Chemical mapping of a 177-nucleotide RNA with DMS and 2A3.
It was measured as part of the RMDB library OK1LIB.
Conditions: 150 mM KOAc, 10 mM MgCl2 and 150 mM bicine (pH 8.5), 24 C.
The DMS profile rests on 1,344 reads.
[RMDB]
RNA sequence: GGGAACGACUCGAGUAGAGUCGAAAACUAAUUAGGGAAGGAUGGGAUGUUGCGUUCGUUCAAAAGAGAUUAGGUCACGCACAUGUUCAGACAACGUUAAAUACCUAUGUUCAUCUUUCAGAUCAGGGCUUUGGACCAAUUUCGAUUGGUCCAAAGCAAAAGAAACAACAACAACAAC
Reactivity to DMS in 0.01 (KOAc 150mM, MgCl2 10mM, bicine 150mM(pH8.5), 24C), signal-to-noise 1, nucleotides 027 to 126: c150u020a020a080u000u010a020g010g000g000a040a120g010g010a110u050g000g000g060a020u000g000u020u000g000c040g030u000u000c100g000u000u000c180a000a030a120a120g000a080g030a050u020u100a100g000g000u020c190a020c000g020c020a080c090a000u040g060u000u050c070a040g000a160c030a050a090c100g000u000u000a020a100a030u030a020c000c010u000a000u040g000u000u010c090a110u030c000u000u020u030c110a170g020a080u070c250a070g000g010
Reactivity to 2A3 in 0.01 (KOAc 150mM, MgCl2 10mM, bicine 150mM(pH8.5), 24C), signal-to-noise 2, nucleotides 027 to 126: c010u000a100a080u270u180a230g000g000g000a060a000g040g090a090u010g010g000g010a060u100g030u080u030g020c120g050u000u030c000g000u030u010c060a060a070a050a030g170a000g050a000u060u150a070g160g000u070c000a000c030g060c000a000c010a060u000g050u080u090c020a080g020a080c040a170a000c010g010u090u070a120a150a000u090a100c000c000u070a090u170g060u000u060c050a130u000c000u010u110u000c080a130g070a180u130c050a020g020g000